[RMDB]
RNA sequence: GGGAACGACUCGAGUAGAGUCGAAAACGGCUGGCACACGAAGGUGACCGGCGUCGGCUACGCACCGGGACAGGUUGCGCCGCGCUGGUCGCGGUUCCUGCAAGACACGUUCGGCGAGGGCAACGUGUCGCUGACCGCGUACAUGCAGGAGUUGGCCGCAUGAGUCAUGAUUCGUCAUGACUCAUGCAAAAGAAACAACAACAACAAC
Reactivity to 2A3 in 0.01 (KOAc 150mM, MgCl2 10mM, bicine 150mM(pH8.5), 24C), signal-to-noise 2, nucleotides 027 to 156: c030g020g020c010u030g020g020c040a050c030a010c100g170a230a050g180g000u060g000a000c010c000g000g000c010g040u180c130g030g000c040u130a080c120g000c020a010c000c040g050g030g210a070c080a200g000g010u200u190g040c010g000c000c000g000c000g000c000u010g000g000u030c000g000c000g000g000u060u030c010c060u000g000c020a030a000g000a000c000a000c010g000u000u000c010g030g000c030g030a070g030g100g000c040a090a040c090g160u180g030u070c020g000c000u010g000a030c030c000g000c070g010u070a090c010a060u020g040c000a010g000g000a060g000u070u080g020g000c000c030

Chemical mapping of a 207-nucleotide RNA with 2A3.
Conditions: 150 mM KOAc, 10 mM MgCl2 and 150 mM bicine (pH 8.5), 24 C.
It was measured as part of the RMDB library OK3TST.